[RMDB]
RNA sequence: GGGAACGACUCGAGUAGAGUCGAAAACAUUUAGGGCGUUGAAAACAGGCGAUUCUUCUGGCUUUGUGUCCCCAGGAAGGGAGAAGGGCCUCCCUCCGCCUGGUGGAGGGUGUUUGCCUGCAAUAGGGCACUCCUCUACAUUCGUGUAGAGGAGUGCAAAAGAAACAACAACAACAAC
Reactivity to DMS in 0.01 (KOAc 150mM, MgCl2 10mM, bicine 150mM(pH8.5), 24C), signal-to-noise 1, nucleotides 027 to 126: c050a090u010u000u000a140g020g000g030c060g060u000u010g000a060a090a130a150c100a040g000g020c030g000a130u010u000c060u000u010c060u000g000g000c070u000u000u000g000u010g010u000c030c030c020c060a130g020g020a090a130g010g000g020a020g020a080a090g000g000g010c030c050u000c020c020c000u000c040c040g000c070c100u030g000g020u010g030g010a040g000g000g010u000g000u000u000u000g030c000c020u010g000c160a070a090u020a130g010g000
Chemical mapping of a 177-nucleotide RNA with DMS.
The reactions ran in a buffer of 150 mM KOAc, 10 mM MgCl2 and 150 mM bicine (pH 8.5), at 24 C.
DMS adducts were read by reverse transcription with MarathonRT.
For DMS, 1,261 sequencing reads were counted.